[RMDB]
Record summary:
This 177-nucleotide RNA was probed chemically with DMS. The reactions ran in a buffer of 150 mM KOAc, 10 mM MgCl2 and 150 mM bicine (pH 8.5), at 24 C. The DMS profile rests on 559 reads. DMS adducts were read by reverse transcription with MarathonRT. It was measured as part of the RMDB library OK2TRN. DMS (dimethyl sulfate) methylates the pairing face of unpaired adenines and cytosines.
RNA sequence: GGGAACGACUCGAGUAGAGUCGAAAAGCGCCUGCAGCGCCUGGACGAGGCCUUCGUUGCAGUGGCCGAGGCAGUUGACCGCCCAGCCCUGGAUGAAAUCCAGGUAGCGCUUGCCGGUGUGGUCGUAGACCCGGUGCUGGUUCGCCAGCACCGGGUCAAAAGAAACAACAACAACAAC
Reactivity to DMS in 0.01 (KOAc 150mM, MgCl2 10mM, bicine 150mM(pH8.5), 24C), signal-to-noise 1, nucleotides 027 to 126: g010c130g010c070c020u000g000c050a110g060c010g020c170c030u000g020g020a030c130g050a220g000g020c070c030u010u000c120g000u000u010g000c090a110g010u000g020g050c080c010g010a180g000g010c000a120g000u020u000g000a140c070c020g010c010c020c000a150g000c150c000c000u000g000g000a040u000g000a110a000a300u000c000c000a000g000g020u000a020g020c010g000c060u000u030g100c060c060g000g000u000g020u000g000g000u000c020g020u000a120